Background
This 177-nucleotide RNA was probed chemically with 2A3 and DMS. The 2A3 profile rests on 1,340 reads. The reactions ran in a buffer of 150 mM KOAc, 10 mM MgCl2 and 150 mM bicine (pH 8.5), at 24 C.
RNA sequence: GGGAACGACUCGAGUAGAGUCGAAAAACUUCCUACUUCGGUAGGAAGUAAAAGUAGAAAAGUUGGUGCUUAGAGCACGCCCUCUACCGUAAUAAUAGAUAAACCCUUAGCACUUCGGUGCUAAGAACACUCGUUCUACUUUCGAGUAGAACGAGUGAAAAGAAACAACAACAACAAC
Reactivity to 2A3 in 0.01 (KOAc 150mM, MgCl2 10mM, bicine 150mM(pH8.5), 24C), signal-to-noise 1, nucleotides 027 to 126: a000c000u000u020c020c010u010a000c040u000u040c080g110g000u010a000g000g090a030a020g000u000a000a000a000a010g000u020a010g060a000a140a000a040g070u210u260g100g030u020g010c010u080u060a070g010a050g220c020a000c030g090c010c000c000u000c000u000a030c010c000g030u040a040a070u070a210a000u030a140g110a030u180a080a080a040c010c030c020u010u010a010g010c000a010c010u020u060c300g090g010u000g000c000u000a000a000g000a000a000
Reactivity to DMS in 0.01 (KOAc 150mM, MgCl2 10mM, bicine 150mM(pH8.5), 24C), signal-to-noise 2, nucleotides 027 to 126: a090c000u020u010c000c000u000a000c000u000u020c180g010g010u000a020g000g000a000a000g000u000a000a030a110a090g010u010a040g010a020a040a050a070g020u020u000g040g000u000g010c010u000u010a160g000a150g030c010a010c000g020c040c010c020u000c010u000a000c030c140g050u010a070a020u010a100a090u010a130g000a140u010a040a070a200c120c070c000u010u000a000g000c010a000c010u000u020c160g010g010u000g020c010u010a000a000g000a080a080